This 177-nucleotide RNA was probed chemically with 2A3 and DMS. For 2A3, 15,949 sequencing reads were counted. Conditions: 150 mM KOAc, 10 mM MgCl2 and 150 mM bicine (pH 8.5), 24 C. Source: RMDB library M2PK50, as collected in RNAgym. In probing experiments dimethyl sulfate is read out at A N1 and C N3, which are open when not base-paired.
RNA sequence: GGGAACGACUCGAGUAGAGUCGAAAAUAGGUUGAAUUCGUUCAACCUACAGGCAAGCAAGCAGCGCAACGAGUCAAGGCGAUAAUAAGAUAGCGCAUGCUGAUACAUCGGUCUUCGGACCGAUGAAUUAACAAUUAUUCUUCGGAAUAAUUGUUAAAAAAGAAACAACAACAACAAC
Reactivity to 2A3 in 0.01 (KOAc 150mM, MgCl2 10mM, bicine 150mM(pH8.5), 24C), signal-to-noise 7, nucleotides 027 to 126: u050a010g010g000u000u000g020a020a010u080u080c150g030u070u010c010a000a000c010c000u000a030c010a010g100g030c060a040a080g010c020a040a000g000c010a020g010c010g010c020a050a050c060g030a010g050u060c060a060a050g130g040c050g060a050u070a170a060u110a100a090g110a150u120a060g000c000g000c020a030u040g000c000u010g000a020u010a160c010a000u000c000g000g000u000c000u020u040c190g050g000a000c000c000g000a000u000g000a000a010
Reactivity to DMS in 0.01 (KOAc 150mM, MgCl2 10mM, bicine 150mM(pH8.5), 24C), signal-to-noise 9, nucleotides 027 to 126: u000a000g010g010u010u000g010a020a030u000u010c190g020u000u000c000a010a010c000c000u000a010c110a080g010g000c140a100a120g000c130a100a040g010c020a040g000c010g020c020a100a120c080g010a120g000u000c060a060a070g010g010c060g010a070u000a060a080u010a090a120g010a110u010a080g010c010g010c020a070u000g010c020u000g000a120u010a150c010a010u000c000g010g010u000c000u000u010c180g020g010a010c000c000g000a000u000g000a030a070